Source information
Conditions: 150 mM KOAc, 10 mM MgCl2 and 150 mM bicine (pH 8.5), 24 C. Structure probing data (2A3 and DMS) for a 177-nucleotide construct. Reactivities are given for positions 27 through 126.
RNA sequence: GGGAACGACUCGAGUAGAGUCGAAAACUGGGCUAUGGAGACAUGUAUCCCAAGAAGUGGUCUGGGAUGCUGGAUGGGGGACUGUGUGCCCUGACUGGUGAGCUGACCAUUGCAAUGCCCGUGCCUGGCUACUCUAUGGGUUCGCCCAUAGAGUAGCAAAAGAAACAACAACAACAAC
Reactivity to 2A3 in 0.01 (KOAc 150mM, MgCl2 10mM, bicine 150mM(pH8.5), 24C), signal-to-noise 5, nucleotides 027 to 126: c080u080g000g000g060c040u080a060u250g060g010a250g080a130c020a080u190g080u170a090u050c000c010c020a010a010g110a060a000g050u030g010g010u010c020u030g040g020g040a050u160g000c000u000g000g050a080u090g070g000g000g030g010a010c050u100g120u100g090u270g280c010c000c020u030g060a030c000u020g000g000u050g020a030g030c010u000g000a010c020c000a000u020u100g030c060a000a030u080g000c000c030c010g000u010g020c010c010u020g080
Reactivity to DMS in 0.01 (KOAc 150mM, MgCl2 10mM, bicine 150mM(pH8.5), 24C), signal-to-noise 2, nucleotides 027 to 126: c060u040g010g010g000c020u040a090u010g000g000a160g020a130c090a080u020g010u000a140u020c010c010c010a100a060g000a060a030g000u000g000g010u010c010u000g010g000g000a140u030g000c020u000g000g000a100u010g000g010g000g000g020a010c010u000g010u040g020u010g030c020c020c000u000g010a040c010u010g010g000u000g000a300g000c020u000g000a040c000c010a020u000u010g010c130a070a090u020g000c010c000c020g010u010g000c030c020u000g010